The data come from the RNA Mapping Database (RMDB), library OK3TST. Structure probing data (2A3) for a 207-nucleotide construct. Values are in units of 0.01, from 0 to 300, in steps of 10.
[RMDB]
RNA sequence: GGGAACGACUCGAGUAGAGUCGAAAAAGAACUCUUAUAGUUUCAAGCUCUCUUAUGGCCCUUGGGCUCCCCAUUGCCUUUGGGAUCAAGUCUAGGCUCAUUAAUAUGACAUCUGAGGCCCCCUGGGGUGAUGCCUCAGCCUCUGUGCCUGCACACGCGAGAGAACUCUAUUCGUAGAGUUCUCUCGAAAAGAAACAACAACAACAAC
Reactivity to 2A3 in 0.01 (KOAc 150mM, MgCl2 10mM, bicine 150mM(pH8.5), 24C), signal-to-noise 1, nucleotides 027 to 156: a000g050a040a020c030u050c140u250u230a080u090a300g030u140u050u050c020a040a030g010c020u020c000u030c080u220u090a050u190g010g000c000c070c000u010u020g000g010g010c020u060c030c000c000c000a050u010u150g060c020c000u000u010u000g010g010g030a050u070c050a040a040g000u000c010u070a010g000g040c000u050c070a020u070u280a100a090u150a100u220g030a020c010a070u020c020u050g000a050g040g000c000c000c000c030c050u010g130g000g000g000u020g050a090u150g000c010c000u000c020a010g030c000c050u020c020u080g000u050g040c000c030u020g040c100a050c010a040c080g090